[RMDB]
RNA sequence: GGGAACGACUCGAGUAGAGUCGAAAACUGGGUGCUGGCUGGACACAGGGGGCCUCUGAUGGACAGAGCACAAUGAACGAGUUGCCCAGCAGGGUAGGGAGCUCAGGAGUGGCUGAGAGGCUGGCCAAUGGACGCAUUUUUUCGAAAAUGCGUCCAUAAAAGAAACAACAACAACAAC
Reactivity to 2A3 in 0.01 (KOAc 150mM, MgCl2 10mM, bicine 150mM(pH8.5), 24C), signal-to-noise 2, nucleotides 027 to 126: c010u010g000g000g000u090g140c010u000g070g030c000u040g000g040a080c050a010c000a050g000g000g030g070g050c160c010u000c010u000g200a230u070g050g070a050c050a050g040a060g000c010a010c070a080a100u140g020a070a010c090g000a080g140u030u110g110c000c000c010a030g150c080a010g030g010g030u080a020g060g000g010a020g060c010u000c040a000g000g070a060g050u050g030g000c000u010g010a050g010a010g080g000c010u000g080g000c020c070a010
Reactivity to DMS in 0.01 (KOAc 150mM, MgCl2 10mM, bicine 150mM(pH8.5), 24C), signal-to-noise 1, nucleotides 027 to 126: c080u000g000g040g000u000g000c020u000g030g000c000u000g000g000a080c080a070c140a070g000g000g010g040g070c060c010u010c030u000g010a120u000g000g010a120c050a070g000a070g000c050a080c060a030a010u020g000a100a210c110g000a110g000u010u000g000c010c000c030a050g000c010a100g000g000g030u000a060g000g010g000a100g000c130u000c040a140g000g030a120g010u020g000g000c030u000g000a100g000a120g000g000c010u000g000g000c020c100a160